Chemical mapping of a 177-nucleotide RNA with DMS and 2A3. For DMS the reverse transcriptase was MarathonRT.
RNA sequence: GGGAACGACUCGAGUAGAGUCGAAAAUUACUGGCGUUGAUAUCGAUCUUCGCGUCGUGCUACAUGCUGGUUGCGGCCCGCAGUAAGUGCUUGACCCCUUAUGCUUUAACACCAGGAGCUGCAGUUCCGUAGACACAGAAUUCGUUCUGUGUCUACGAAAAGAAACAACAACAACAAC
Reactivity to DMS in 0.01 (KOAc 150mM, MgCl2 10mM, bicine 150mM(pH8.5), 24C), signal-to-noise 5, nucleotides 027 to 126: u010u000a060c050u000g000g010c050g010u000u000g010a080u000a100u000c080g000a070u000c030u000u000c120g020c130g020u010c050g030u000g000c060u000a080c140a060u000g020c030u000g000g010u010u000g010c080g010g000c030c020c070g000c040a060g010u000a050a080g010u000g010c050u000u010g000a160c060c030c020c060u000u000a060u000g010c050u010u010u000a040a100c060a090c030c030a040g000g000a070g010c040u000g000c050a080g000u000u000c050
Reactivity to 2A3 in 0.01 (KOAc 150mM, MgCl2 10mM, bicine 150mM(pH8.5), 24C), signal-to-noise 4, nucleotides 027 to 126: u120u070a050c020u040g040g000c010g040u020u080g050a060u040a060u270c080g060a050u020c050u060u060c070g010c060g010u040c020g020u020g040c010u050a070c000a120u060g010c020u030g010g010u050u060g010c060g060g020c020c000c020g000c010a020g020u120a180a010g030u010g100c040u110u130g080a130c000c000c000c000u090u100a110u110g030c020u110u090u120a100a030c050a040c030c010a030g030g000a020g020c000u040g010c010a030g000u090u060c010
For 2A3 the reverse transcriptase was SuperScript II with manganese. It was measured as part of the RMDB library OK2TRN.